[RMDB]
RNA sequence: GGGAACGACUCGAGUAGAGUCGAAAAGAUAUGGAGAAGAGCGAUAAGGAGACCUCGGAAACGAGGUUCUCCUUUUGACGCUCCUCCUAAGUCAAAACUGGAGUCAACCUUCGGGUUGACUCCAGAACGACAUAUAAUAGUUCGCUAUUAUAUGUCGAAAAGAAACAACAACAACAAC
Reactivity to DMS in 0.01 (KOAc 150mM, MgCl2 10mM, bicine 150mM(pH8.5), 24C), signal-to-noise 4, nucleotides 027 to 126: g010a030u000a300u000g000g010a010g000a140a100g010a020g020c000g020a160u000a010a010g010g010a020g000a030c010c000u000c000g020g010a080a080a160c010g010a000g010g010u000u000c010u000c000c000u000u000u000u000g000a190c050g010c010u000c010c000u000c000c000u000a040a100g000u000c020a080a040a120a160c000u000g000g000a010g010u000c000a010a010c000c000u000u010c190g030g010g010u000u000g010a000c000u000c000c000a000g000a010a120
Reactivity to 2A3 in 0.01 (KOAc 150mM, MgCl2 10mM, bicine 150mM(pH8.5), 24C), signal-to-noise 1, nucleotides 027 to 126: g030a030u090a050u130g020g010a020g000a300a070g010a050g000c000g050a030u020a080a000g010g010a000g010a010c010c000u000c000g030g040a060a050a010c000g020a000g000g010u010u010c000u000c010c040u010u000u000u010g000a010c010g000c000u000c000c010u000c010c000u010a080a050g040u020c010a000a020a150a180c010u000g020g010a000g000u000c010a010a010c020c000u050u120c300g050g000g000u000u000g010a000c000u000c000c000a000g000a000a010

Record summary: An RNA of 177 nucleotides, treated with DMS and 2A3 and read out base by base. Reactivities are rounded to 0.1 and cut off at 0 and 3. The RNA was probed in 150 mM KOAc, 10 mM MgCl2 and 150 mM bicine (pH 8.5) at 24 C. It was measured as part of the RMDB library TTRDEL.